[RMDB]
RNA sequence: GGGAACGACUCGAGUAGAGUCGAAAAGGCCUGCUCCUCCGCGCGCAGCCGCUUGAGCGACAGCCAGAUCACGCCCCACAGCGCGGCGGACGGCGCGAACAUCGAGAUGAACAGCACGCUCAGGUGAGGCAUACCAUUUAUUCGUAAAUGGUAUGCCAAAAGAAACAACAACAACAAC
Reactivity to DMS in 0.01 (KOAc 150mM, MgCl2 10mM, bicine 150mM(pH8.5), 24C), signal-to-noise 4, nucleotides 027 to 126: g000g000c010c030u000g000c100u010c010c020u000c030c060g000c050g020c080g030c110a090g020c050c080g000c020u010u010g000a030g010c060g000a120c140a090g000c000c030a080g000a090u000c030a110c070g000c030c000c020c060a120c170a150g030c020g030c030g010g010c040g020g020a040c080g010g000c040g010c030g010a060a100c100a080u000c060g000a070g000a070u000g020a070a080c100a080g000c050a130c020g010c010u010c030a050g000g010u000g010a180
Reactivity to 2A3 in 0.01 (KOAc 150mM, MgCl2 10mM, bicine 150mM(pH8.5), 24C), signal-to-noise 2, nucleotides 027 to 126: g050g010c010c010u000g000c060u020c000c000u030c030c000g000c000g000c000g020c030a030g110c040c020g020c020u050u070g020a010g050c000g050a090c060a020g000c050c020a050g020a120u120c030a020c180g030c000c000c020c000a060c020a050g080c020g020c060g050g000c010g030g030a020c040g050g010c020g020c010g050a020a020c000a050u100c040g040a020g010a150u050g040a040a040c030a010g060c020a000c030g020c010u030c010a020g020g030u030g030a070